[RMDB]
RNA sequence: GGGAACGACUCGAGUAGAGUCGAAAAAGGUAGAUCGCCGCCAGCACCGCCCGGAUGAUGUCGUUGGUGCGCCGGGUCAGUGGUUGCAGCAAGUUACCGGAAACGCCGAUGUCGCGUCCGUCAACUCAUACUUCGUUUCAUUCGUGAAACGAAGUAUAAAAGAAACAACAACAACAAC
Reactivity to 2A3 in 0.01 (KOAc 150mM, MgCl2 10mM, bicine 150mM(pH8.5), 24C), signal-to-noise 6, nucleotides 027 to 126: a010g090g020u080a040g020a130u080c040g000c020c010g010c000c010a020g020c010a010c000c010g000c010c010c000g040g000a120u130g030a060u110g100u130c080g060u100u130g100g070u120g030c020g000c000c000g010g030g030u070c030a030g030u050g050g090u060u080g010c000a010g000c000a090a030g020u070u040a030c020c000g010g000a110a130a010c000g010c020c010g090a130u170g040u140c040g000c020g040u010c010c010g040u030c040a060a040c020u030c070
Reactivity to DMS in 0.01 (KOAc 150mM, MgCl2 10mM, bicine 150mM(pH8.5), 24C), signal-to-noise 5, nucleotides 027 to 126: a060g010g020u000a060g010a050u030c060g020c030c030g010c050c050a080g000c040a040c020c070g000c040c010c000g000g000a060u020g020a050u030g010u010c030g030u010u020g010g020u000g010c100g010c000c010g000g000g000u020c080a050g010u000g000g000u010u020g010c050a100g010c090a060a080g010u020u010a090c040c010g010g000a090a090a090c060g020c020c060g010a100u020g000u020c060g010c060g020u010c000c010g000u020c060a060a050c110u020c110
This 177-nucleotide RNA was probed chemically with 2A3 and DMS. The reactions ran in a buffer of 150 mM KOAc, 10 mM MgCl2 and 150 mM bicine (pH 8.5), at 24 C. For 2A3, 6,866 sequencing reads were counted. DMS adducts were read by reverse transcription with MarathonRT.